[RMDB]
RNA sequence: GGGAACGACUCGAGUAGAGUCGAAAAGAUAUGGAAUACGAAGAACAGGACUACUUUGAUCUCGGAAACGAGGGAGUAGGCCUGGGAGUAUUCCUAAGUCAAAGGUUCGGUGUUCGCACCGAACCAAGGUUGGAUGUAGGUUCGCCUACAUCCAACCAAAAGAAACAACAACAACAAC
Reactivity to 2A3 in 0.01 (KOAc 150mM, MgCl2 10mM, bicine 150mM(pH8.5), 24C), signal-to-noise 1, nucleotides 027 to 126: g000a000u090a030u170g010g000a000a000u020a010c020g180a240a130g070a160a010c010a020g010g010a010c000u020a010c010u270u110u150g180a190u150c000u020c010g000g000a110a140a090c010g010a000g070g000g030a020g010u000a010g000g000c000c010u040g040g000g010a040g010u000a000u020u000c000c000u000a110a020g060u060c080a170a060a110g000g000u040u000c000g060g000u000g010u010u080c300g010c090a000c000c000g020a010a000c010c010a000a010
Reactivity to DMS in 0.01 (KOAc 150mM, MgCl2 10mM, bicine 150mM(pH8.5), 24C), signal-to-noise 1, nucleotides 027 to 126: g030a000u000a300u010g000g000a000a000u010a000c000g030a130a220g010a100a200c010a030g000g000a020c010u000a010c000u010u000u010g000a080u000c000u000c000g000g000a030a040a140c010g010a000g040g000g010a000g000u000a010g000g000c020c000u010g020g000g000a190g010u010a010u000u020c010c010u020a030a100g000u000c030a090a120a170g000g000u000u000c000g010g020u000g000u000u020c280g000c000a010c000c000g000a010a000c000c010a020a020
Background: Structure probing data (2A3 and DMS) for a 177-nucleotide construct. The DMS profile rests on 814 reads. Reactivities are given for positions 27 through 126. For DMS the reverse transcriptase was MarathonRT.